[RMDB]
RNA sequence: GGGAACGACUCGAGUAGAGUCGAAAAGGAUCCUCUCACAGGAUUGUCUCUGUGUUCCGAAACUCCAACAGUAUUACUUCGGGACACCUACAGUAAUACUGUAGGUAUAGAGAGUAGGAGAGGAUCGCCCUGAGGAUGGAUUCGUCCAUCCUCAGGGAAAAGAAACAACAACAACAAC
Reactivity to 2A3 in 0.01 (KOAc 150mM, MgCl2 10mM, bicine 150mM(pH8.5), 24C), signal-to-noise 2, nucleotides 027 to 126: g030g000a010u000c010c030u000c000u010c010a190c050a030g150g140a200u150u230g150u000c010u000c010u000g070u020g010u020u010c000c010g010a040a010a030c030u040c080c040a080a070c060a220g100u100a120u170u220a060c040u010u000c000g000g040g000a030c000a030c000c000u020a000c000a010g030u060a090a120u070a300c000u010g000u010a010g000g000u010a010u180a030g030a000g020a010g030u110a040g000g060a010g000a030g010g000a000u000c010g010
Reactivity to DMS in 0.01 (KOAc 150mM, MgCl2 10mM, bicine 150mM(pH8.5), 24C), signal-to-noise 2, nucleotides 027 to 126: g000g010a010u000c000c000u000c010u010c030a100c160a160g000g000a140u010u010g050u010c030u000c000u010g010u010g000u020u000c000c000g000a010a020a060c170u000c080c120a130a180c240a110g010u000a080u000u000a060c180u000u000c060g010g000g000a010c090a100c000c000u000a020c020a000g020u010a080a120u010a300c000u000g000u010a000g000g000u000a010u000a000g000a010g000a060g020u000a100g000g000a020g010a000g000g000a000u000c000g000